An RNA of 177 nucleotides, treated with DMS and 2A3 and read out base by base. Source: RMDB library OK2TRN, as collected in RNAgym. Conditions: 150 mM KOAc, 10 mM MgCl2 and 150 mM bicine (pH 8.5), 24 C.

RNA sequence: GGGAACGACUCGAGUAGAGUCGAAAAUUGAACUCAACAAGCCAUCAACUGGACAAAUGGGCCUCCUUAAUCAUCUAGUGAAACAAUUCUGCCAACGAGCAUAACAGAACUUGUUAGCUUUUGACAACAAUAGGUCCAUGUUCGCAUGGACCUAUUGAAAAGAAACAACAACAACAAC
Reactivity to DMS in 0.01 (KOAc 150mM, MgCl2 10mM, bicine 150mM(pH8.5), 24C), signal-to-noise 4, nucleotides 027 to 126: u010u000g020a070a130c030u020c060a070a060c080a080a120g020c040c030a040u000c080a080a060c120u000g000g030a120c120a050a080a080u000g010g000g010c020c010u000c020c040u000u010a050a080u000c080a080u010c040u000a050g020u000g000a070a060a060c040a050a080u000u000c030u010g000c040c040a060a080c190g010a080g010c060a080u000a080a190c040a020g000a050a070c180u000u000g000u000u010a180g000c030u000u010u010u000g010a040c120a040a160
Reactivity to 2A3 in 0.01 (KOAc 150mM, MgCl2 10mM, bicine 150mM(pH8.5), 24C), signal-to-noise 3, nucleotides 027 to 126: u070u060g020a050a010c000u030c030a010a050c020a040a070g020c010c000a060u080c030a070a130c050u070g010g050a020c050a010a140a050u090g040g050g000c020c010u000c030c000u100u130a090a030u090c020a020u010c030u070a020g050u010g100a010a030a000c010a020a070u040u000c010u020g020c010c000a050a040c070g080a070g060c060a080u020a070a010c000a020g020a070a050c050u050u020g000u000u010a010g020c020u060u000u060u150g060a030c040a100a010